[RMDB]
Conditions: 150 mM KOAc, 10 mM MgCl2 and 150 mM bicine (pH 8.5), 24 C. The record gives the reactivity of an RNA of 177 nucleotides to 2A3 and DMS. 2A3 adducts were read by reverse transcription with SuperScript II with manganese. As a SHAPE reagent, 2A3 marks flexible, mostly unpaired nucleotides at the ribose 2'-OH. It was measured as part of the RMDB library OK2TST. Reactivities are rounded to 0.1 and cut off at 0 and 3.
RNA sequence: GGGAACGACUCGAGUAGAGUCGAAAAAGUUGCACACACACCAGUGUUUCUUGGCUGGGAUUCAGGAAUUGUAUUUAUUGGGGUCUAUCAGUGUGUCACCAUAUCCCCAGGGAACAGAUUUAAAUAACGUGAGCAAAAUGUUCGCAUUUUGCUCACGAAAAGAAACAACAACAACAAC
Reactivity to 2A3 in 0.01 (KOAc 150mM, MgCl2 10mM, bicine 150mM(pH8.5), 24C), signal-to-noise 1, nucleotides 027 to 126: a000g030u000u010g060c010a000c020a000c000a000c000a020c000c000a000g020u020g040u090u070u110c070u080u140g030g060c040u080g020g070g080a090u070u020c050a030g100g010a070a040u190u200g060u150a190u070u260u100a090u130u060g080g000g000g000u000c060u040a030u030c030a160g020u000g000u000g030u000c000a010c020c000a000u060a060u150c040c010c010c000a020g180g000g000a050a000c000a010g190a150u130u270u160a110a130a070u200a120a020
Reactivity to DMS in 0.01 (KOAc 150mM, MgCl2 10mM, bicine 150mM(pH8.5), 24C), signal-to-noise 1, nucleotides 027 to 126: a120g000u000u000g000c030a050c060a050c080a090c120a280c050c010a050g000u010g040u000u000u030c120u010u020g010g000c030u000g000g020g030a200u000u000c090a030g010g000a050a030u010u020g000u010a040u000u000u010a060u060u000g050g000g010g010u010c110u000a050u000c110a030g010u020g010u000g030u000c160a070c050c030a040u000a080u000c020c010c000c050a070g010g000g020a070a060c130a130g000a110u010u000u030a050a070a080u000a010a210